[RMDB]
RNA sequence: GGGAACGACUCGAGUAGAGUCGAAAAAUCAAGUUCAUUCUAACUGGCCUGAUCAACAGCUCAGUCACUUCUCCGCAAAGUAUGGUACAAGCCUGUCAAGUGUCUGCACAGCAGGCCAUGUACAACAUGGAUAAUUACCGUUCGCGGUAAUUAUCCAAAAAGAAACAACAACAACAAC
Reactivity to 2A3 in 0.01 (KOAc 150mM, MgCl2 10mM, bicine 150mM(pH8.5), 24C), signal-to-noise 1, nucleotides 027 to 126: a000u010c020a000a000g110u120u050c010a090u110u090c040u170a070a140c040u020g010g000c010c000u060g020a100u110c040a000a110c020a010g030c020u000c040a010g040u020c000a040c080u040u060c010u000c010c010g020c050a030a070a150g050u080a100u220g000g000u010a020c000a010a000g010c000c000u040g030u070c060a180a130g000u010g020u010c070u140g040c030a010c000a030g010c000a010g020g000c020c000a040u070g000u010a010c030a030a000c050a120
Reactivity to DMS in 0.01 (KOAc 150mM, MgCl2 10mM, bicine 150mM(pH8.5), 24C), signal-to-noise 3, nucleotides 027 to 126: a120u000c030a100a090g000u000u000c140a060u000u000c140u000a120a070c070u010g010g000c060c030u000g020a080u010c140a060a090c060a060g000c060u000c020a020g000u010c050a040c070u000u010c000u010c020c090g030c150a060a050a110g020u010a090u020g010g000u000a030c040a100a210g000c000c000u000g010u010c060a060a080g010u000g000u000c090u000g000c060a040c050a180g010c030a000g020g010c000c070a020u000g010u000a040c050a040a070c160a140
This 177-nucleotide RNA was probed chemically with 2A3 and DMS. It was measured as part of the RMDB library OK2TST. The 2A3 profile rests on 1,149 reads.